[RMDB]
This 207-nucleotide RNA was probed chemically with 2A3. The 2A3 profile rests on 928 reads. The reactions ran in a buffer of 150 mM KOAc, 10 mM MgCl2 and 150 mM bicine (pH 8.5), at 24 C.

RNA sequence: GGGAACGACUCGAGUAGAGUCGAAAAGUGAAAGCUCCUUCUCUCGCAGUGUGUAACUCAUGAUUCUCAUGACCCCUGGUUGGAGAGAUCCGGACUAGGAGCCAGGGGGCCUCUGAUUCUGCCAGCCAAAACUGUCGUAAGUUCGCUUACGACAGAAGUAUGGGCAAGGAUUCGUCCUUGCCCAUACAAAAGAAACAACAACAACAAC
Reactivity to 2A3 in 0.01 (KOAc 150mM, MgCl2 10mM, bicine 150mM(pH8.5), 24C), signal-to-noise 2, nucleotides 027 to 156: g050u030g100a090a000a080g000c010u030c010c000u060u010c010u000c000u020c050g100c050a020g000u020g010u030g040u100a060a030c010u030c030a040u080g070a150u270u040c090u020c040a020u070g030a070c000c000c000c000u020g000g060u020u110g030g040a050g020a020g000a110u020c060c010g100g070a090c080u110a060g070g020a010g010c000c010a020g000g000g000g000g010c010c010u040c060u120g020a080u120u050c010u040g030c030c020a010g000c020c030a060a070a090a100c020u000g000u010c000g010u010a000a000g000u010u040c180g000c130u010u020a000c000g000a000c000a000g000a000a000
2A3 adducts were read by reverse transcription with SuperScript II with manganese.